[RMDB]
RNA sequence: GGGAACGACUCGAGUAGAGUCGAAAAGAUAUGGAUCGAGAAGUCUUUUGACGCGUGUGCAUCGGAAACGAUGCUUACGCGAUAAGACUCUCGAUCCUAAGUCAAAACACACUCUUCGGAGUGUGAACGACAUACUCGGGUUCGCCCGAGUAUGUCGAAAAGAAACAACAACAACAAC
Reactivity to DMS in 0.01 (KOAc 150mM, MgCl2 10mM, bicine 150mM(pH8.5), 24C), signal-to-noise 1, nucleotides 027 to 126: g000a000u000a190u010g000g020a000u000c000g020a030g000a030a070g020u000c000u010u000u010u000g000a210c080g050c000g000u000g000u000g000c000a010u000c000g030g000a020a050a060c010g030a020u030g010c000u000u000a010c000g010c000g000a040u000a060a030g000a000c020u000c000u000c000g030a000u000c000c000u010a020a060g000u000c010a080a140a160a300c010a010c010a010c000u000c010u000u010c230g030g010a000g020u010g020u000g020a030a150
Reactivity to 2A3 in 0.01 (KOAc 150mM, MgCl2 10mM, bicine 150mM(pH8.5), 24C), signal-to-noise 2, nucleotides 027 to 126: g010a000u000a000u090g000g000a000u000c010g060a020g030a190a070g030u010c040u050u280u290u300g300a300c070g010c010g060u000g000u010g000c000a010u040c010g000g000a040a030a030c000g020a010u030g050c000u020u060a000c010g030c000g030a010u050a000a000g010a000c000u000c000u000c000g020a000u020c000c000u000a000a000g010u000c000a010a000a200a010c010a020c020a000c010u030c050u040u180c300g170g010a010g000u010g000u000g020a010a030